[RMDB]
RNA sequence: GGGAACGACUCGAGUAGAGUCGAAAAAGAUUACGGACUUCUGAUAUAACCCCAAUGUUCUUCCUUGUACUAAAGACAGAAGAGGCUCUUACAGAUGUUUAGGCGAUCAAUGGUUAGUGAGACGAAGACAGAAUAUAGGGUUCGCCCUAUAUUCUGUAAAAGAAACAACAACAACAAC
Reactivity to DMS in 0.01 (KOAc 150mM, MgCl2 10mM, bicine 150mM(pH8.5), 24C), signal-to-noise 3, nucleotides 027 to 126: a120g000a090u000u010a140c080g000g000a080c040u000u000c040u000g000a130u000a070u010a090a100c060c010c010c050a090a110u010g010u000u000c020u000u000c050c060u000u000g000u000a070c090u000a060a040a080g010a070c050a030g010a090a070g000a110g010g010c060u000c060u000u000a090c090a080g010a060u000g000u000u000u010a060g010g010c060g020a030u000c050a030a050u010g010g010u000u000a050g020u000g010a110g010a100c090g000a100a100g000
Reactivity to 2A3 in 0.01 (KOAc 150mM, MgCl2 10mM, bicine 150mM(pH8.5), 24C), signal-to-noise 1, nucleotides 027 to 126: a000g050a050u140u160a100c090g020g040a020c050u000u050c050u150g040a040u070a040u070a300a120c000c030c010c000a040a100u050g020u060u070c000u040u020c030c020u020u100g000u040a080c030u100a070a100a100g010a020c040a000g020a050a010g050a070g060g030c000u020c020u110u130a050c030a080g110a090u050g040u050u030u130a090g050g000c040g050a040u080c000a090a090u060g000g040u060u030a020g010u000g070a040g010a040c100g000a010a030g120

Background: Chemical mapping of a 177-nucleotide RNA with DMS and 2A3. 2A3 adducts were read by reverse transcription with SuperScript II with manganese. Values cover nucleotides 27 to 126. Source: RMDB library OK2TST, as collected in RNAgym. For DMS, 3,090 sequencing reads were counted.